Source: RMDB library VIROID, as collected in RNAgym.
The record gives the reactivity of an RNA of 177 nucleotides to 2A3 and DMS.
DMS adducts were read by reverse transcription with MarathonRT.
The 2A3 profile rests on 4,554 reads.
[RMDB]
RNA sequence: GGGAACGACUCGAGUAGAGUCGAAAACAACAUUCCGAGGGGACCGUCCCCUCGGUAAUGGCGAAUGGGACCCAGAACUCUCUCUAGAUUCCGAUAGAGAAUCGAGAGAAAACUGGCUCUCCCUUAGGUAGAUAGGAAUGUUCGCAUUCCUAUCUACAAAAGAAACAACAACAACAAC
Reactivity to 2A3 in 0.01 (KOAc 150mM, MgCl2 10mM, bicine 150mM(pH8.5), 24C), signal-to-noise 3, nucleotides 027 to 126: c020a000a020c000a000u030u000c010c000g000a000g020g010g030g040a100c090c100g300u260c020c000c010c010u000c000g000g000u000a000a010u000g030g010c050g110a080a070u100g010g000g010a020c050c010c000a000g000a040a050c020u000c010u010c000u020c030u080a070g000a020u000u000c020c040g210a270u150a220g250a030g000a050a000u020c010g000a000g000a000g000a020a020a000a020c000u000g000g000c000u010c000u000c010c010c000u020u030a080g030
Reactivity to DMS in 0.01 (KOAc 150mM, MgCl2 10mM, bicine 150mM(pH8.5), 24C), signal-to-noise 4, nucleotides 027 to 126: c040a080a180c010a020u000u000c000c000g000a010g010g000g000g010a300c300c300g000u010c010c010c000c000u020c000g010g010u010a000a000u010g000g010c140g010a180a070u000g000g010g010a000c190c000c000a000g010a110a300c210u000c020u000c000u000c010u000a120g010a020u000u000c000c010g020a220u000a100g000a150g000a010a000u000c000g000a000g010a000g000a000a010a110a170c000u000g000g000c020u000c020u000c000c010c000u010u000a050g000